[RMDB]
RNA sequence: GGGAACGACUCGAGUAGAGUCGAAAAACAUACUACGAUAUGAUUCAGAUGGUGUCUUACUGGUUCGUACCAAGGGACAUAAUGGUUUCUUGUUUCCAACCAAAGAACAAGUGGCGAGCCUGAAUAAAAAACUGACUGCCGUUCGCGGCAGUCAGAACCUUCAUUGUCCGUUCGCGGACAAUGAAGGAAAAGAAACAACAACAACAAC
Reactivity to 2A3 in 0.01 (KOAc 150mM, MgCl2 10mM, bicine 150mM(pH8.5), 24C), signal-to-noise 2, nucleotides 027 to 156: a000c030a060u110a080c040u060a040c080g090a110u030a010u170g160a160u100u210c080a090g060a140u100g080g040u040g020u030c010u070u070a130c040u010g020g010u070u090c110g080u100a040c010c020a030a030g010g000g020a030c030a010u240a120a140u100g050g000u020u000u030c000u000u000g000u000u010u020c010c010a040a040c020c000a000a130a000g030a020a020c030a110a010g020u000g020g030c020g000a010g010c000c020u040g090a040a030u120a130a070a010a020a000a050c000u010g000a000c000u000g010c030c010g010u050u060c180g030c010g080g000c000a010g010u000c000a000g000a000a000